[RMDB]
RNA sequence: GGGAACGACUCGAGUAGAGUCGAAAAGAACUAAACGGGAAAAGUUGUAUGCUAUAUGUCAAUGUGUAUAUCAUAAGCGUAUAGCUUUUCCCCUUAGUCUAAAGUACUAGUAGUUCGCUACUAGUACGAUUACAAUAACCUUCGGGUUAUUGUAAUCAAAAGAAACAACAACAACAAC
Reactivity to 2A3 in 0.01 (KOAc 150mM, MgCl2 10mM, bicine 150mM(pH8.5), 24C), signal-to-noise 9, nucleotides 027 to 126: g020a030a010c010u010a020a000a030c020g000g000g000a000a010a000a020g010u010u010g000u010a010u010g000c010u030a040u000a020u300g060u090c090a190a150u230g110u060g060u250a090u060a030u300c020a010u010a020a020g010c000g000u000a000u000a010g000c000u010u000u000u010c000c000c000c000u010u010a000g000u000c010u060a160a140a020g000u000a000c000u000a000g000u000a000g010u010u040c250g010c080u000a000c000u000a000g000u000a000c000
Reactivity to DMS in 0.01 (KOAc 150mM, MgCl2 10mM, bicine 150mM(pH8.5), 24C), signal-to-noise 7, nucleotides 027 to 126: g000a090a030c000u010a000a010a060c300g010g010g000a010a000a010a010g020u000u000g020u000a000u000g010c010u000a110u010a010u000g000u010c160a100a090u000g020u020g020u010a100u000a070u010c040a010u000a030a020g000c010g020u000a010u000a010g010c000u000u000u000u000c000c000c000c020u000u000a000g010u000c030u000a070a070a160g010u000a000c000u000a000g010u000a000g010u000u010c240g010c000u000a010c000u000a000g010u000a000c000